RNA sequence: GGGAACGACUCGAGUAGAGUCGAAAAGAUAUGGAUGUAACACCGUUGCGAUCAUCAGGCAACAGCGUUGACUCGGAAACGAGUCACGACGACAUGCCUGGUCGCAACGGUGUUACAUCCUAAGUCAGUUUAUAUAACUCUUCGGAGUUAUAUAAACAAAAGAAACAACAACAACAAC
Reactivity to DMS in 0.01 (KOAc 150mM, MgCl2 10mM, bicine 150mM(pH8.5), 24C), signal-to-noise 4, nucleotides 027 to 126: g000a040u000a300u010g010g000a010u000g010u000a000a000c010a010c000c000g010u010u010g010c010g000a040u010c300a150u020c220a020g010g000c010a040a140c280a220g010c000g010u000u010g010a010c010u000c010g000g000a100a090a230c000g000a010g000u000c000a000c060g000a110c060g010a100c300a210u020g010c010c000u000g000g000u000c020g010c000a000a000c010g000g000u000g000u000u000a010c000a000u000c000c000u000a000a060g000u000c060a130
Chemical mapping of a 177-nucleotide RNA with DMS. The RNA was probed in 150 mM KOAc, 10 mM MgCl2 and 150 mM bicine (pH 8.5) at 24 C. Source: RMDB library TTRINS, as collected in RNAgym.